[RMDB]
RNA sequence: GGGAACGACUCGAGUAGAGUCGAAAACUCCCCUCAAAAUCGUUUCAGACCAAAAUUGAUUCGGCGGCCCUGUCAUGAGGCCGAAACGAAGGCACGUACCCCUUCGAAUGGCGUCGGGGAGUCAGCGAAAGCACUGACCCUUUCGAGGGUCAGUGAAUCUCCUAAUCAACUUCGGUUGAUUAGGAGAAAAAGAAACAACAACAACAAC
Reactivity to 2A3 in 0.01 (KOAc 150mM, MgCl2 10mM, bicine 150mM(pH8.5), 24C), signal-to-noise 2, nucleotides 027 to 156: c030u020c000c020c020c000u080c070a210a230a180a200u090c060g010u010u090u070c070a110g030a220c030c050a080a090a170a120u160u060g020a060u070u030c020g030g030c000g020g000c020c000c000u080g030u040c060a090u090g020a030g020g020c020c010g040a000a000a000c000g020a000a000g000g000c070a000c180g180u210a160c060c000c000c000u000u000c000g030a070a050u000g030g020c020g060u060c020g010g010g000g030a020g000u010c050a030g020c020g060a130a080a040g090c000a010c000u000g000a000c000c020c000u030u010u020c070g050a030g040g000g000u000c000a000g000u000g000a000a000
Reactivity to DMS in 0.01 (KOAc 150mM, MgCl2 10mM, bicine 150mM(pH8.5), 24C), signal-to-noise 1, nucleotides 027 to 156: c010u010c000c000c010c040u000c080a090a060a080a050u000c030g030u000u000u000c030a090g020a120c030c040a050a080a110a290u000u020g020a160u000u010c080g020g000c080g040g010c010c040c010u010g010u000c130a100u000g060a110g000g060c000c000g000a030a050a120c030g020a040a020g010g040c030a130c120g030u000a120c000c030c020c010u000u010c000g020a070a140u030g010g020c000g000u000c130g020g050g000g000a030g000u000c030a110g040c020g000a080a110a140g000c020a000c000u010g010a020c000c000c010u000u000u000c290g020a050g050g020g000u020c000a000g020u010g000a050a100